RNA sequence: GGGAACGACUCGAGUAGAGUCGAAAAGAUAUGGAAAUCAUGGACAGCGAAGAACUCGGAAACGAGGGAGCUGCCAUAUUUCCUAAGUCAAAACCUUGGAGCUGGUGUUCGCACCAGCUCCAAGGAAGUACAUAUAACCGUUCGCGGUUAUAUGUACAAAAGAAACAACAACAACAAC
Reactivity to DMS in 0.01 (KOAc 150mM, MgCl2 10mM, bicine 150mM(pH8.5), 24C), signal-to-noise 2, nucleotides 027 to 126: g010a040u000a300u000g000g000a010a010a010u000c170a000u000g010g020a140c020a010g000c010g000a090a180g000a130a190c000u000c000g000g000a160a090a140c010g010a010g000g000g000a070g020c000u000g000c020c000a000u010a010u010u000u000c000c000u000a030a070g010u000c020a060a090a060a150c010c000u000u000g010g000a060g030c000u000g000g020u000g020u010u010c240g010c010a010c000c000a000g020c020u000c010c000a010a000g000g000a000a030
Reactivity to 2A3 in 0.01 (KOAc 150mM, MgCl2 10mM, bicine 150mM(pH8.5), 24C), signal-to-noise 3, nucleotides 027 to 126: g010a030u090a040u120g000g050a020a010a000u060c120a030u090g020g030a300c000a020g030c020g200a300a040g020a070a050c010u000c030g020g070a100a080a060c010g010a010g000g000g050a010g000c000u000g000c000c000a000u000a000u000u010u000c000c000u010a100a000g020u010c030a010a030a140a240c000c010u000u010g020g010a010g000c000u000g040g070u040g100u200u300c300g030c220a000c000c000a000g030c000u000c010c000a000a000g000g000a000a000